[RMDB]
RNA sequence: GGGAACGACUCGAGUAGAGUCGAAAAUACUGAGUACGCGCGUAGUUGCAGGCAUUCCGGGUGCAGCAACUGACGCGGAAGACUUUUCCCAGAGUGUGCGCUUCAACUGGCGUGCUGAGUAGUGCACGAAUUGCACGUACGUUCGCGUACGUGCAAAAUGCAUACUUAGCUUCGGCUAAGUAUGCAUAAAAGAAACAACAACAACAAC
Reactivity to 2A3 in 0.01 (KOAc 150mM, MgCl2 10mM, bicine 150mM(pH8.5), 24C), signal-to-noise 1, nucleotides 027 to 156: u130a000c010u000g000a000g010u000a040c000g000c000g010c000g040u000a000g010u000u020g000c060a130g090g010c020a020u110u120c170c200g070g040g040u000g000c020a010g000c000a010a000c000u020g150a030c010g000c000g000g000a030a000g050a070c030u130u120u030u010c030c000c000a030g030a000g020u120g000u030g030c020g000c070u100u060c050a160a120c080u030g000g030c090g000u030g000c020u010g030a030g000u090a020g020u020g000c040a000c000g010a060a080u130u030g000c070a000c000g000u000a000c030g000u000u040c150g030c000g050u000a010c020g010u000g010c000a000a000a000
Reactivity to DMS in 0.01 (KOAc 150mM, MgCl2 10mM, bicine 150mM(pH8.5), 24C), signal-to-noise 1, nucleotides 027 to 156: u000a120c050u000g000a160g020u000a030c020g030c000g060c050g040u010a020g020u000u000g010c010a200g020g020c000a050u010u000c010c300g010g050g110u000g050c000a300g020c040a020a040c020u000g010a010c040g040c000g010g040a030a150g000a140c090u000u000u000u010c000c010c000a210g000a120g020u010g020u000g000c000g000c010u000u000c070a100a060c050u000g000g000c090g000u000g010c000u000g020a150g020u000a070g000u000g010c000a100c020g010a070a180u000u000g000c000a020c000g000u000a010c010g020u000u030c290g040c000g010u000a000c000g020u000g000c020a000a000a030
Chemical mapping of a 207-nucleotide RNA with 2A3 and DMS. The DMS profile rests on 2,410 reads. 2A3 adducts were read by reverse transcription with SuperScript II with manganese. DMS adducts were read by reverse transcription with MarathonRT. Values cover nucleotides 27 to 156. The data come from the RNA Mapping Database (RMDB), library M2RFOK.